[RMDB]
The record gives the reactivity of an RNA of 177 nucleotides to 2A3 and DMS.
DMS adducts were read by reverse transcription with MarathonRT.
For 2A3, 1,264 sequencing reads were counted.

RNA sequence: GGGAACGACUCGAGUAGAGUCGAAAAGAAGUCUUUUCAUCAGUAUCUGGGCUGAAGGCUAAGCAUGUGGAUGAUGAAUACUGACCUCUGUGUUUUUACGUCCUCUGAUCUGUAACUCACCUGGAGCCCACGAUAUGCUCUUCGGAGCAUAUCGUGGAAAAGAAACAACAACAACAAC
Reactivity to 2A3 in 0.01 (KOAc 150mM, MgCl2 10mM, bicine 150mM(pH8.5), 24C), signal-to-noise 1, nucleotides 027 to 126: g040a050a030g070u020c010u010u070u000u000c070a190u020c020a020g080u050a110u020c060u060g050g040g000c030u020g050a130a010g110g040c050u080a000a050g000c040a040u220g030u050g110g050a030u020g010a000u030g000a010a030u060a040c040u030g110a130c030c060u070c050u040g040u000g000u040u020u010u070u040a090c020g020u040c010c010u020c030u000g020a070u070c010u020g010u050a040a060c000u010c020a060c040c010u020g030g050a010g010c010
Reactivity to DMS in 0.01 (KOAc 150mM, MgCl2 10mM, bicine 150mM(pH8.5), 24C), signal-to-noise 2, nucleotides 027 to 126: g010a110a090g020u000c010u000u000u000u010c050a040u000c060a050g030u000a090u000c070u000g010g000g010c080u010g000a140a030g020g020c030u010a080a080g010c100a040u010g000u000g000g010a090u000g010a050u000g030a030a050u000a040c110u010g000a070c060c080u010c040u000g030u010g000u000u000u000u000u000a130c100g020u000c000c010u000c040u010g000a080u000c040u010g010u000a070a050c040u010c060a080c040c040u010g010g010a140g020c110
The DMS profile rests on 1,904 reads. The reactions ran in a buffer of 150 mM KOAc, 10 mM MgCl2 and 150 mM bicine (pH 8.5), at 24 C.